This 207-nucleotide RNA was probed chemically with DMS and 2A3. For 2A3, 1,279 sequencing reads were counted. It was measured as part of the RMDB library OK3TST. For 2A3 the reverse transcriptase was SuperScript II with manganese. For DMS, 2,171 sequencing reads were counted. 2A3 is a SHAPE reagent: it acylates the 2'-hydroxyl of flexible nucleotides of all four kinds. The RNA was probed in 150 mM KOAc, 10 mM MgCl2 and 150 mM bicine (pH 8.5) at 24 C.
[RMDB]
RNA sequence: GGGAACGACUCGAGUAGAGUCGAAAAGAAAGAGAACGGUGCUCCAGGCCCCUAGACAGGGAGUGCGAUCCCACGGCAGUGGGCAGUCCUGUCCCGCGAGCCCGGCCCUCAGUCUGAGUGGUGCUGACCUCUAACUGUGGACGCCAUGCUCCAUCAAGGUAUUAAAUAAUUUCGAUUAUUUAAUACCAAAAGAAACAACAACAACAAC
Reactivity to DMS in 0.01 (KOAc 150mM, MgCl2 10mM, bicine 150mM(pH8.5), 24C), signal-to-noise 1, nucleotides 027 to 156: g000a100a170a070g010a120g010a050a130c040g000g040u000g000c020u000c040c040a130g020g000c030c000c010c060u030a040g010a090c030a060g010g010g000a060g060u000g050c050g000a210u000c030c010c000a090c040g020g050c300a190g040u000g020g010g000c020a080g000u000c050c030u010g010u000c010c000c070g020c080g000a130g030c000c030c030g040g030c080c030c000u010c000a070g020u000c070u000g000a050g030u000g020g000u000g020c080u010g010a080c010c030u000c000u000a050a160c050u020g020u000g010g010a090c070g010c020c050a010u010g000c000u000c020c040a140u010c040a120a260
Reactivity to 2A3 in 0.01 (KOAc 150mM, MgCl2 10mM, bicine 150mM(pH8.5), 24C), signal-to-noise 2, nucleotides 027 to 156: g010a020a110a030g060a010g030a080a020c040g000g010u060g020c000u000c000c020a050g000g040c000c040c000c040u020a010g010a060c060a030g060g010g000a050g060u120g050c060g050a130u090c000c000c010a010c010g100g000c100a090g000u010g020g000g000c020a000g020u000c010c010u050g030u030c030c040c020g030c040g020a020g000c020c020c010g020g000c000c000c000u000c010a040g010u000c030u090g040a010g010u140g030g060u110g030c020u060g090a060c000c010u000c030u030a050a050c020u050g010u040g020g030a030c030g010c000c000a040u060g000c000u030c000c030a080u270c110a140a000